[RMDB]
RNA sequence: GGGAACGACUCGAGUAGAGUCGAAAAGAUGGAGCUGGAAGCCAUUAUCCUCAGCAAACUAACGCAGGAACAGAAAAUCAAAUACCUCAUGUUCUUACUUACAAGUGGGAGUUGAAUGUUGAGAACACAUGGAUACAUGGGGGGUGCAACACACACACCCGUGAUUAAUGUUCGCAUUAAUCACGGGAAAAGAAACAACAACAACAAC
Reactivity to 2A3 in 0.01 (KOAc 150mM, MgCl2 10mM, bicine 150mM(pH8.5), 24C), signal-to-noise 3, nucleotides 027 to 156: g040a030u040g010g000a010g020c040u020g050g020a060a030g020c010c010a030u070u090a060u050c010c030u060c040a030g020c060a060a120a060c060u100a090a000c080g050c070a040g050g050a020a020c030a020g140a090a130a040a020u170c130a080a120a040u140a130c020c020u070c030a070u030g000u030u000c020u040u030a060c010u110u080a040c040a170a060g010u070g030g040g030a070g010u070u080g130a170a060u060g010u030u110g030a060g020a090a000c020a000c010a110u080g000g010a030u060a150c030a070u020g000g000g000g000g000g000u020g020c020a090a050c010a000c000a000c020a000c000a010
Reactivity to DMS in 0.01 (KOAc 150mM, MgCl2 10mM, bicine 150mM(pH8.5), 24C), signal-to-noise 2, nucleotides 027 to 156: g000a110u000g030g010a130g040c050u010g010g000a120a070g010c000c060a100u000u010a070u000c040c010u000c030a080g040c030a070a080a110c060u030a030a050c090g090c000a060g020g010a020a140c070a060g000a070a030a020a130u000c050a090a150a300u010a120c040c030u040c100a130u000g000u000u000c010u010u000a050c050u000u000a090c060a060a120g040u010g000g000g030a080g000u010u010g000a050a080u020g000u010u000g040a140g000a050a040c010a040c060a070u000g020g040a210u020a020c080a070u000g010g010g010g000g040g000u000g000c010a080a030c050a080c090a070c050a080c100a100